[RMDB]
RNA sequence: GGGAACGACUCGAGUAGAGUCGAAAAGUCAAUCAGACAGAGCAAGUGACAGCUGCUAUCAAAUUUGGACCAGGGAGAGUGUCAACUGCUCUCAACUUGAUGCAUGUUGGUAGAACACACUUUGAUGUCGAAGGAUACGUUUCGACGUAUCCUUCGAAAAAGAAACAACAACAACAAC
Reactivity to DMS in 0.01 (KOAc 150mM, MgCl2 10mM, bicine 150mM(pH8.5), 24C), signal-to-noise 3, nucleotides 027 to 126: g030u040c080a070a030u020c070a090g010a060c210a020g000a120g000c060a060a040g000u000g000a020c040a090g050c040u000g000c000u010a080u020c080a030a060a070u030u020u020g000g000a030c080c010a060g010g010g000a040g000a020g000u000g000u010c100a040a080c090u020g000c030u000c010u000c020a080a080c120u010u000g020a030u010g000c060a070u020g000u000u000g010g000u020a040g030a060a110c130a090c150a100c040u000u000u030g000a120u030g000
Reactivity to 2A3 in 0.01 (KOAc 150mM, MgCl2 10mM, bicine 150mM(pH8.5), 24C), signal-to-noise 5, nucleotides 027 to 126: g050u030c020a010a070u070c020a020g030a070c010a050g020a020g010c030a050a030g040u020g050a020c000a050g070c020u050g020c000u060a030u080c040a080a070a170u190u160u230g080g030a050c040c010a030g040g040g000a100g020a010g060u060g050u060c040a050a040c010u080g010c000u000c000u000c000a020a080c010u030u040g010a010u090g060c030a040u060g000u030u020g010g060u080a030g090a220a020c070a000c010a030c140u090u070u140g110a150u190g050
Chemical mapping of a 177-nucleotide RNA with DMS and 2A3. Conditions: 150 mM KOAc, 10 mM MgCl2 and 150 mM bicine (pH 8.5), 24 C. Reactivities are rounded to 0.1 and cut off at 0 and 3. High DMS reactivity at an A or C suggests that its Watson-Crick edge is free.